[RMDB]
Notes:
An RNA of 177 nucleotides, treated with 2A3 and DMS and read out base by base.
RNA sequence: GGGAACGACUCGAGUAGAGUCGAAAACCCGUAUCGGGUGCCUCUCAAGCCUGCCGCGCCUGGAUUACUGCGGUUCAGUUCUUGUCCGCCGGGCAAGCCAGUCCCGCGGGGCGAAUUGGUCUCGGAACCAACCUUAUCGAUUCGUCGAUAAGGUUGGAAAAGAAACAACAACAACAAC
Reactivity to 2A3 in 0.01 (KOAc 150mM, MgCl2 10mM, bicine 150mM(pH8.5), 24C), signal-to-noise 6, nucleotides 027 to 126: c030c000c000g030u100a150u140c020g010g010g020u100g050c000c010u030c000u010c050a070a090g010c010c020u120g120c050c010g010c000g010c000c000u040g000g020a030u060u100a100c010u030g020c020g080g000u110u060c020a030g040u150u090c050u080u070g010u010c000c020g040c050c090g060g020g030c030a010a010g020c010c000a010g010u090c010c010c000g010c000g000g000g000g010c020g010a030a040u030u020g020g000u010c010u020c030g020g040a040a050
Reactivity to DMS in 0.01 (KOAc 150mM, MgCl2 10mM, bicine 150mM(pH8.5), 24C), signal-to-noise 3, nucleotides 027 to 126: c000c020c000g010u040a040u010c030g020g010g030u010g010c010c010u000c070u000c140a090a220g000c060c010u010g010c040c000g010c040g030c140c030u020g010g010a040u000u010a040c030u020g020c030g000g000u030u050c000a050g000u020u040c130u040u020g000u010c000c020g020c000c130g010g000g010c060a050a050g010c130c020a040g010u020c100c200c020g020c040g010g000g000g030c000g010a090a050u030u020g000g000u010c020u000c000g020g000a120a180
Overview
2A3 adducts were read by reverse transcription with SuperScript II with manganese. Values are in units of 0.01, from 0 to 300, in steps of 10. Conditions: 150 mM KOAc, 10 mM MgCl2 and 150 mM bicine (pH 8.5), 24 C. DMS adducts were read by reverse transcription with MarathonRT.